[RMDB]
RNA sequence: GGGAACGACUCGAGUAGAGUCGAAAAACCGGCUCAGCUGGAUUCUCGAACCCCCGACACCUCUACGCUCAGCGCACACAACCCCGAAAAAGACUUCGGCCCCCGCCGGGACGGCAAUCCCAGUGCGAUUCGGCACAAUAUUCGUAUUGUGCCGAAUAAAAGAAACAACAACAACAAC
Reactivity to 2A3 in 0.01 (KOAc 150mM, MgCl2 10mM, bicine 150mM(pH8.5), 24C), signal-to-noise 3, nucleotides 027 to 126: a000c040c010g020g000c040u050c090a070g000c010u030g030g030a110u120u010c030u010c030g030a060a060c010c000c010c000c010g010a020c010a030c020c000u020c020u100a040c020g000c020u030c020a030g000c000g040c030a010c010a010c020a100a160c030c000c000c030g070a060a050a000a010a040g100a070c040u040u030c040g020g000c000c000c000c000c000g000c000c000g030g000g030a000c010g060g000c010a010a050u020c020c010c010a000g000u030g060c040g010
Reactivity to DMS in 0.01 (KOAc 150mM, MgCl2 10mM, bicine 150mM(pH8.5), 24C), signal-to-noise 3, nucleotides 027 to 126: a080c080c010g000g020c050u040c110a200g000c020u000g000g000a110u030u000c070u010c030g040a060a230c040c030c000c020c040g010a080c070a030c050c010u030c030u000a040c100g010c020u000c060a040g000c080g000c020a030c050a060c110a050a100c070c000c040c020g030a030a060a130a030a080g000a060c080u000u020c050g020g000c020c000c010c000c040g020c000c050g000g000g000a070c060g000g010c140a060a180u010c040c000c000a050g020u030g010c060g020